[RMDB]
The record gives the reactivity of an RNA of 177 nucleotides to DMS.
Source: RMDB library VIROID, as collected in RNAgym.
The DMS profile rests on 1,461 reads.
RNA sequence: GGGAACGACUCGAGUAGAGUCGAAAAAGUACCCGGGCCAUCCCCUUCUCCACACUCCUUCCCCCCUGCGGGGCCCCCCCAUAAGAUGGCGAGAAAUCCACUCAUGGGUCCAUCGUCCAUCUCCUUCACUAUGGGUAAUGUUCGCAUUACCCAUAGUAAAAGAAACAACAACAACAAC
Reactivity to DMS in 0.01 (KOAc 150mM, MgCl2 10mM, bicine 150mM(pH8.5), 24C), signal-to-noise 2, nucleotides 027 to 126: a170g010u020a100c030c000c000g010g000g010c030c040a060u000c040c040c020c060u000u000c020u000c010c040a080c110a110c040u000c020c030u000u020c020c010c010c000c020c070u010g010c160g030g010g000g000c010c020c040c010c000c000c020a070u000a020a030g000a000u010g000g030c000g000a020g000a130a230a010u010c030c010a060c270u020c230a130u000g010g010g020u000c070c060a230u000c000g000u030c010c000a000u000c000u000c110c110u020u020c110